[RMDB]
RNA sequence: GGGAACGACUCGAGUAGAGUCGAAAAAGCAAUCGCGAGGAGAUGGCCCGACUGGGCCGGGCGAUCCCGCAAGACCUGGUCGACGAGACCGUCCGCACCACGUUGCUGCGAGGGCGUCUGGUCACACGGAACGCGAGAACUUCGGUUCUCGCGUUCCAAAAGAAACAACAACAACAAC
Reactivity to 2A3 in 0.01 (KOAc 150mM, MgCl2 10mM, bicine 150mM(pH8.5), 24C), signal-to-noise 1, nucleotides 027 to 126: a000g150c160a140a070u110c040g000c020g050a040g080g030a190g090a030u030g020g000c000c020c020g000a080c150u120g000g000g050c000c020g030g000g000c000g000a120u030c020c000c000g010c020a050a000g000a030c000c060u080g080g000u030c010g000a040c020g040a020g190a300c220c040g000u000c000c070g090c090a000c000c020a020c050g040u050u150g000c120u090g030c000g000a300g030g000g000c000g000u020c000u050g000g000u000c020a000c000a000c150

Structure probing data (2A3) for a 177-nucleotide construct. Reactivities are given for positions 27 through 126. The RNA was probed in 150 mM KOAc, 10 mM MgCl2 and 150 mM bicine (pH 8.5) at 24 C. Values are in units of 0.01, from 0 to 300, in steps of 10. The 2A3 profile rests on 463 reads. It was measured as part of the RMDB library OK1LIB.